[RMDB]
RNA sequence: GGGAACGACUCGAGUAGAGUCGAAAACAGCCUCCAUCUCCCGGGUUCAAGCAGUUCUCUGCCUCAGCUUACUGAGUAGCUGAGACUACAGGUGUGAGCCACCAUGCCCAGCUAAUUUUUAUAGAGGCUGGGUUUUGCCAUGUUGGCCAGGCUGGUACUAAUGACUACUCUUCGGAGUAGUCAUUAGAAAAGAAACAACAACAACAAC
Reactivity to 2A3 in 0.01 (KOAc 150mM, MgCl2 10mM, bicine 150mM(pH8.5), 24C), signal-to-noise 2, nucleotides 027 to 156: c000a000g000c010c020u000c020c010a030u050c010u020c020c010c000g050g040g000u100u090c100a100a020g050c040a020g020u240u110c120u030c000u100g010c000c000u010c000a010g040c020u100u150a150c100u230g050a030g140u110a000g010c000u010g010a000g000a020c020u040a080c010a070g100g000u060g030u020g090a020g000c020c000a030c030c000a000u030g000c020c000c000a020g000c000u000a020a070u030u160u070u170u210a270u060a160g060a010g040g000c010u000g000g000g000u080u000u020u040g000c010c010a030u060g010u030u020g010g010c000c000a000g000g010c000u020g030g050u010a060
Reactivity to DMS in 0.01 (KOAc 150mM, MgCl2 10mM, bicine 150mM(pH8.5), 24C), signal-to-noise 1, nucleotides 027 to 156: c060a110g010c010c000u020c030c020a090u000c020u000c000c030c060g000g010g000u000u010c070a080a110g020c080a080g010u020u000c040u010c060u000g050c000c010u000c020a030g040c030u010u000a300c070u020g010a230g040u000a010g040c010u000g010a040g010a020c010u010a050c000a050g020g040u010g000u000g000a130g000c030c020a100c000c070a110u000g010c020c020c010a000g000c000u010a030a120u000u000u010u010u020a140u010a180g010a300g020g040c020u000g050g020g000u000u000u000u010g000c040c070a190u010g010u000u000g020g010c030c040a060g010g030c000u020g000g020u000a210